RNA sequence: GGGAACGACUCGAGUAGAGUCGAAAAGAUAUGGAUGUAUACCUUCUUUUGACGCGACUCGGAAACGAGUUAGCGAUAAGAAGAAUACAUCCUAAGUCAAACAGCAGGCAGUUCGCUGCCUGCUGAAGUCAGAGGUAGUGUUCGCACUACCUCUGACAAAAGAAACAACAACAACAAC
Reactivity to 2A3 in 0.01 (KOAc 150mM, MgCl2 10mM, bicine 150mM(pH8.5), 24C), signal-to-noise 1, nucleotides 027 to 126: g030a020u060a030u160g000g000a000u000g010u040a000u010a160c030c000u000u000c020u000u130u080u160g190a130c050g000c010g000a010c000u000c010g040g060a100a090a030c030g000a010g010u000u010a040g000c000g000a010u030a060a000g000a020a000g000a030a010u000a010c010a010u000c000c000u010a040a000g030u020c030a020a090a160c000a000g010c000a000g030g000c000a010g020u050u180c260g170c150u000g000c000c010u000g000c000u000g030a000a020
Reactivity to DMS in 0.01 (KOAc 150mM, MgCl2 10mM, bicine 150mM(pH8.5), 24C), signal-to-noise 2, nucleotides 027 to 126: g000a030u000a300u010g000g010a030u000g000u010a010u000a080c190c000u000u000c000u000u000u000u000g000a140c080g000c060g010a010c000u000c000g000g020a140a060a140c000g030a000g000u010u000a010g010c000g000a030u000a000a010g000a030a000g020a210a010u010a010c000a000u000c010c000u000a030a110g030u000c030a070a130a300c000a020g000c030a000g000g000c000a010g010u000u000c220g010c010u030g000c000c000u000g010c000u000g010a020a050
This 177-nucleotide RNA was probed chemically with 2A3 and DMS.
The DMS profile rests on 1,289 reads.
For DMS the reverse transcriptase was MarathonRT.
Values cover nucleotides 27 to 126.